[RMDB]
RNA sequence: GGGAACGACUCGAGUAGAGUCGAAAACGUGGCCUCUUCCGAAAGACACGGAGUGCAAGAAACGUUAGCAAGACACGAAGAAAAGUGUAACAACGUGACACUAACUUUGAAAAGUCGCAGGGCACGGAAAUUUAAUAUUAUUCGUAAUAUUAAAUUUAAAAGAAACAACAACAACAAC
Reactivity to DMS in 0.01 (KOAc 150mM, MgCl2 10mM, bicine 150mM(pH8.5), 24C), signal-to-noise 9, nucleotides 027 to 126: c020g030u010g000g000c010c000u010c080u010u020c040c050g010a090a090a100g010a110c130a150c070g000g000a040g010u000g000c180a100a100g000a080a090a030c030g000u000u010a070g000c130a090a080g000a030c020a050c010g000a140a140g010a080a110a090a110g010u010g010u010a060a080c070a050a060c080g010u010g000a140c060a040c040u010a150a120c020u000u010u000g000a090a090a110a130g010u010c020g010c160a050g000g010g010c010a010c020g010g000
Reactivity to 2A3 in 0.01 (KOAc 150mM, MgCl2 10mM, bicine 150mM(pH8.5), 24C), signal-to-noise 8, nucleotides 027 to 126: c000g020u040g100g130c010c010u060c020u120u000c040c020g120a170a070a030g090a020c050a000c080g020g010a010g010u040g020c050a070a030g050a120a060a010c010g010u030u030a020g050c050a060a040g050a040c010a000c040g090a050a130g110a140a160a030a020g020u020g020u050a110a050c040a020a030c030g030u040g040a000c010a010c070u080a100a010c000u060u020u020g090a130a090a020a020g020u020c010g000c080a010g000g020g000c010a000c010g020g020